[RMDB]
An RNA of 177 nucleotides, treated with 2A3 and read out base by base. It was measured as part of the RMDB library RFM100. The RNA was probed in 150 mM KOAc, 10 mM MgCl2 and 150 mM bicine (pH 8.5) at 24 C.

RNA sequence: GGGAACGACUCGAGUAGAGUCGAAAAUCCCCUCUUUAACACCAGGCUCGGCACGCACAUCGCGACGGCCAAUGGUUUCGGGAACCCCAGUACAGGCAGGCUGGGACUUCCCUCUUUAACACCAGGCGUAAUGAGGUCACUUCGGUGACCUCAUUACAAAAGAAACAACAACAACAAC
Reactivity to 2A3 in 0.01 (KOAc 150mM, MgCl2 10mM, bicine 150mM(pH8.5), 24C), signal-to-noise 1, nucleotides 027 to 126: u000c000c000c000c000u110c040u010u180u000a110a000c000a000c030c050a100g000g010c050u050c060g050g050c080a080c060g030c000a080c000a180u120c190g160c000g000a090c000g000g040c000c000a000a020u030g020g000u040u060u000c160g000g010g000a000a000c010c000c000c000a000g000u120a100c010a100g030g190c030a000g070g000c000u000g000g070g000a000c000u000u000c000c000c000u000c010u000u060u030a070a000c050a010c010c010a000g270g000c000